Overview: An RNA of 177 nucleotides, treated with 2A3 and DMS and read out base by base. It was measured as part of the RMDB library M2PK50.
[RMDB]
RNA sequence: GGGAACGACUCGAGUAGAGUCGAAAACAGUGAGACUUCGGUCUCACUGAAAUGACUAUGCACCAUGACGAGGUCGAAGAUGCGGAGGACGACGAGGAACAAAAACAGCAAGGUUCGCCUUGCUGAACAAAGUAGUUCGGUUCGCCGAACUACUUUGAAAAGAAACAACAACAACAAC
Reactivity to 2A3 in 0.01 (KOAc 150mM, MgCl2 10mM, bicine 150mM(pH8.5), 24C), signal-to-noise 2, nucleotides 027 to 126: c000a020g030u010g000a000g000a000c030u050u130c290g150g000u010c010u000c010a000c000u010g000a010a000a000u080g010a000c030u060a050u210g050c050a030c060c050a070u100g090a030c090g030a030g110g020u020c060g010a070a020g040a080u140g080c030g020g050a020g000g000a020c030g000a010c000g000a010g030g020a130a030c070a050a130a020a020a010c000a000g000c010a000a010g030g000u050u030c180g110c000c000u010u000g010c010u000g000a010a000
Reactivity to DMS in 0.01 (KOAc 150mM, MgCl2 10mM, bicine 150mM(pH8.5), 24C), signal-to-noise 3, nucleotides 027 to 126: c010a000g000u000g010a010g010a030c000u000u020c190g050g010u000c000u010c010a010c010u010g000a010a060a070u000g010a090c030u000a080u000g020c020a070c050c030a090u010g010a130c050g000a080g000g000u000c060g000a070a060g010a080u000g000c050g000g000a060g000g000a060c110g000a080c070g000a060g000g000a050a050c130a020a090a050a070a150c010a010g000c030a010a020g000g020u000u010c200g000c000c010u000u000g010c010u000g010a030a110
2A3 adducts were read by reverse transcription with SuperScript II with manganese.
The 2A3 profile rests on 1,942 reads.
Conditions: 150 mM KOAc, 10 mM MgCl2 and 150 mM bicine (pH 8.5), 24 C.
For DMS the reverse transcriptase was MarathonRT.